The record gives the reactivity of an RNA of 207 nucleotides to 2A3. Reactivities are rounded to 0.1 and cut off at 0 and 3. 2A3 adducts were read by reverse transcription with SuperScript II with manganese. Conditions: 150 mM KOAc, 10 mM MgCl2 and 150 mM bicine (pH 8.5), 24 C. The 2A3 profile rests on 604 reads.

[RMDB]
RNA sequence: GGGAACGACUCGAGUAGAGUCGAAAAGUGGACAGCCACAGUUCAGACAUUUGAGGAAAGCCUGUAAGCCCUCUCUUGCAGCUCCUCCUAGCUUAGCCUCCUUCAUCUUCAAGGGCACUGCGGCUCAAUCUUCAGAUCUCUUCUUUUCUGGCUCCCACAAACGACGCAACUUCGGUUGCGUCGUUUGAAAAGAAACAACAACAACAAC
Reactivity to 2A3 in 0.01 (KOAc 150mM, MgCl2 10mM, bicine 150mM(pH8.5), 24C), signal-to-noise 1, nucleotides 027 to 156: g100u070g040g070a070c040a060g060c010c000a020c050a010g020u090u070c010a000g020a080c080a250u080u060u100g010a050g020g000a240a150a010g020c080c050u090g070u130a100a000g000c020c070c000u070c000u000c020u020u000g040c010a040g000c000u030c040c000u040c020c000u050a040g040c020u070u100a040g020c040c030u120c030c060u140u000c040a210u100c060u250u120c120a080a040g020g020g010c020a010c000u060g020c040g010g000c000u000c020a060a020u030c020u050u040c010a050g010a170u000c000u020c000u110u090c000u000u040u020u010c010u050g010g010c060u030c000c000c000a010